[RMDB]
RNA sequence: GGGAACGACUCGAGUAGAGUCGAAAAUAUUGAUCAAACAGAAAGGUGUAGCAUACAUUGAGACUGUCCUGGCAUGCAUAGUUAACUUAAUGAUUUGUUACUGAAUUGAUGGGACACGCUUCCUACAUGGUAACAGUGUUCAGUGAAUAACCAGUCACUUCGGUGAUGAAUUCGUUCAUCACCGAAGAAAAGAAACAACAACAACAAC
Reactivity to DMS in 0.01 (KOAc 150mM, MgCl2 10mM, bicine 150mM(pH8.5), 24C), signal-to-noise 2, nucleotides 027 to 156: u020a110u000u000g020a080u000c090a090a070a200c030a060g000a100a040a110g040g000u000g020u000a060g020c040a120u000a140c050a130u000u000g000a110g000a100c010u000g000u000c040c030u000g020g000c020a100u000g010c060a110u000a090g020u000u000a030a070c090u000u000a080a110u000g000a130u000u000u000g000u000u000a040c000u020g010a020a110u000u000g010a120u000g010g000g000a050c000a040c140g000c130u000u000c040c030u000a050c110a070u030g000g000u000a070a140c020a100g010u010g050u000u000c030a040g000u000g000a030a050u010a090a090c060c030a140g000u000c040a100
Reactivity to 2A3 in 0.01 (KOAc 150mM, MgCl2 10mM, bicine 150mM(pH8.5), 24C), signal-to-noise 3, nucleotides 027 to 156: u180a050u060u130g040a050u120c070a040a070a120c070a050g150a120a070a040g090g000u090g020u070a000g040c040a030u060a030c030a040u130u140g020a040g030a030c040u020g020u050c010c010u000g060g010c000a020u060g000c020a080u090a070g040u110u100a120a050c010u010u070a030a020u100g110a050u130u070u130g020u020u030a030c030u020g120a170a150u110u020g080a170u050g090g000g030a000c040a040c130g060c090u110u000c010c010u010a040c010a060u160g030g000u040a000a010c000a020g000u010g060u060u030c010a010g010u010g110a030a010u070a110a000c050c040a030g050u050c030a010